[RMDB]
RNA sequence: GGGAACGACUCGAGUAGAGUCGAAAAGGGGUCUAUCCCGUUUGACGCGAGAGACAUGCUGUAUAUGGCUGAAGCCUCCACGGCCAUAUGCAGCAACAGCUCUCGCCGAGGGAUAGACGGAGGCACCCAAAGUACCUAAUGUUCGCAUUAGGUACAAGAGAAAGAACGGAUUCGUCCGUUCUUUCUCAAAAGAAACAACAACAACAAC
Reactivity to 2A3 in 0.01 (KOAc 150mM, MgCl2 10mM, bicine 150mM(pH8.5), 24C), signal-to-noise 3, nucleotides 027 to 156: g040g010g020g030u010c000u000a000u000c030c000c000g010u210u220u290g130a020c020g000c000g000a000g000a000g020a030c210a300u300g000c010u000g010u000a000u000a000u000g020g000c000u010g030a080a010g010c000c010u000c010c000a020c010g030g000c000c000a010u000a000u000g000c000a000g000c000a000a000c000a000g010c010u010c000u000c000g000c000c000g030a140g000g000g000a000u000a000g000a000c000g000g000a000g000g000c000a070c020c000c000a070a170a030g010u000a000c010c000u000a000a000u010g020u080u110c300g000c140a000u000u000a000g000g000u000a000c000a010a020
Reactivity to DMS in 0.01 (KOAc 150mM, MgCl2 10mM, bicine 150mM(pH8.5), 24C), signal-to-noise 2, nucleotides 027 to 156: g000g050g000g010u010c010u000a020u000c010c000c000g030u000u000u010g040a190c140g000c010g010a020g000a050g030a100c080a190u030g000c000u010g020u000a000u000a000u010g000g050c000u010g000a040a080g000c040c010u000c000c030a300c060g030g030c020c000a020u000a020u000g000c000a020g020c010a020a020c100a090g010c050u000c010u000c000g030c020c030g000a220g020g030g010a030u000a000g000a030c020g000g030a010g000g020c020a080c030c010c020a090a090a180g000u010a000c000c000u010a020a000u000g020u000u000c300g100c020a010u000u000a020g000g010u000a000c000a040a150